Record summary
This 207-nucleotide RNA was probed chemically with 2A3 and DMS. DMS adducts were read by reverse transcription with MarathonRT. The DMS profile rests on 2,776 reads.
[RMDB]
RNA sequence: GGGAACGACUCGAGUAGAGUCGAAAAGUACCACUUCGGUGGUACAAAAAGCGUACUACUACUCGUUGAUCUGUACUAUACAACAGCGCUCCCAAAUAGGAGCGACAUGUAUUGUACAGGGAGAGUAGUAUCGCAAAAAUCGGACUUCGGUCCGAAACACUCACAUGAGAUUCGUCUCAUGUGAGUGAAAAGAAACAACAACAACAAC
Reactivity to 2A3 in 0.01 (KOAc 150mM, MgCl2 10mM, bicine 150mM(pH8.5), 24C), signal-to-noise 3, nucleotides 027 to 156: g000u000a000c000c000a000c010u030u050c190g120g000u030g000g010u010a000c020a000a020a000a050a040g060c060g020u090a110c050u000a000c000u010a010c000u010c010g120u130u010g000a030u010c000u000g000u000a000c000u000a000u000a000c020a160a010c080a120g020c000g000c010u030c000c040c010a180a210a080u290a110g000g010a000g000c000g080a020c020a030u030g000u000a010u000u010g000u000a000c020a000g000g010g010a040g000a000g000u000a000g000u000a000u000c000g010c000a050a050a050a060a000u070c000g000g000a000c000u040u040c300g090g000u000c000c000g000a020a000a000
Reactivity to DMS in 0.01 (KOAc 150mM, MgCl2 10mM, bicine 150mM(pH8.5), 24C), signal-to-noise 1, nucleotides 027 to 156: g030u010a000c000c000a000c020u000u000c260g020g000u010g020g050u010a000c000a040a030a120a120a180g000c010g080u000a110c210u000a040c000u000a020c000u010c000g040u010u000g040a030u000c000u010g020u000a000c020u010a040u000a000c010a050a070c090a210g000c010g000c010u000c010c010c010a070a100a210u000a040g030g010a060g010c020g000a020c030a300u000g000u000a010u010u010g000u000a000c010a020g020g000g010a020g000a020g010u010a030g010u000a010u010c040g140c030a030a050a020a100a080u010c020g010g000a050c000u010u000c300g020g000u010c030c000g010a010a070a130